RNA sequence: GGGAACGACUCGAGUAGAGUCGAAAAAAUGUCUUUGAUUGUGCUUACGCUGACGCCGUAAAUCCUAGACUGCUUUACUGCGCCAAGUGGGCUAUCUCGAAUCGCUCUAAUCUGACUCUCAUGCAGCUUUGCCUGUCCAUUGGUAGAGCCAAGGGCAGCAUUAGGUUCACUUCGGUGAACCUAAUGCAAAAGAAACAACAACAACAAC
Reactivity to 2A3 in 0.01 (KOAc 150mM, MgCl2 10mM, bicine 150mM(pH8.5), 24C), signal-to-noise 2, nucleotides 027 to 156: a000a000u300g040u070c090u090u040u070g030a070u090u100g060u080g100c010u080u070a000c050g050c110u000g020a030c010g000c000c010g000u020a000a010a010u010c040c040u070a090g050a240c090u070g060c000u020u040u040a010c020u020g030c000g000c010c000a030a030g000u040g010g060g000c010u010a060u020c090u040c040g110a110a060u050c030g030c040u000c000u030a030a180u120c090u070g040a100c000u000c000u020c070a040u120g010c040a020g010c020u080u070u120g010c010c020u070g030u090c010c020a190u080u060g050g010u040a060g010a010g060c000c000a020a010g000g010g030c010a000
Record summary
Conditions: 150 mM KOAc, 10 mM MgCl2 and 150 mM bicine (pH 8.5), 24 C. An RNA of 207 nucleotides, treated with 2A3 and read out base by base. It was measured as part of the RMDB library OK3TST. 2A3 adducts were read by reverse transcription with SuperScript II with manganese.